[RMDB]
RNA sequence: GGGAACGACUCGAGUAGAGUCGAAAAUAAAACAGCUUCUGAGCUGUGAGAGACGGGAGCCAGGCAGCAGGCAGCAGCGUGUUGAGGCUGACAUUUACAGAGGGACAGUAUGCAGCCCCUGCAGGCCAUAGCAGCGGUAAUUCGUUACCGCUGCUAUAAAAGAAACAACAACAACAAC
Reactivity to DMS in 0.01 (KOAc 150mM, MgCl2 10mM, bicine 150mM(pH8.5), 24C), signal-to-noise 1, nucleotides 027 to 126: u030a050a110a130a040c030a000g010c020u000u020c220u000g010a060g030c000u000g030u000g030a090g020a140g010a070c110g000g000g000a050g020c020c080a030g010g010c030a060g030c100a070g010g010c090a100g010c130a040g000c060g010u020g010u020u000g010a140g000g010c020u000g000a080c140a100u000u010u000a100c110a000g020a100g010g000g010a020c090a050g010u000a070u000g000c020a080g000c040c070c050c060u010g000c080a050g010g020c070c040